[RMDB]
RNA sequence: GGGAACGACUCGAGUAGAGUCGAAAACAAGUGCACGCAUCUGCGGGGCUGUCAGACGUAGUCCUCUUGAAGGCUCUGGUGGCCUUGCAGAUUGGAUACCCCCCAGGCGCCGUGCGGACGGAGGUUCCUCAGAGCUAGUAUUCGUACUAGCUCUGAGAAAAGAAACAACAACAACAAC
Reactivity to 2A3 in 0.01 (KOAc 150mM, MgCl2 10mM, bicine 150mM(pH8.5), 24C), signal-to-noise 2, nucleotides 027 to 126: c030a040a070g120u080g140c070a020c060g060c010a020u010c000u020g000c010g040g000g030g000c010u000g020u030c000a010g010a100c130g080u110a070g240u200c030c000u090c070u160u300g170a210a020g020g000c000u010c020u060g000g000u000g000g000c000c000u000u000g000c000a010g000a010u010u030g020g030a000u240a300c020c010c000c000c000c000a010g080g060c040g000c010c040g000u030g020c070g010g000a010c000g040g040a010g080g000u080u100c010
Reactivity to DMS in 0.01 (KOAc 150mM, MgCl2 10mM, bicine 150mM(pH8.5), 24C), signal-to-noise 5, nucleotides 027 to 126: c090a100a120g020u010g020c110a040c070g020c110a070u000c000u010g010c010g000g000g000g010c020u010g010u000c010a020g010a100c300g030u020a080g000u010c020c040u010c050u010u010g020a090a040g000g000c050u000c010u000g000g000u000g000g000c010c000u000u000g000c000a010g000a010u000u010g010g000a180u000a160c020c010c010c030c010c020a150g000g010c070g020c050c040g010u000g010c100g020g000a050c060g000g010a090g010g000u000u000c060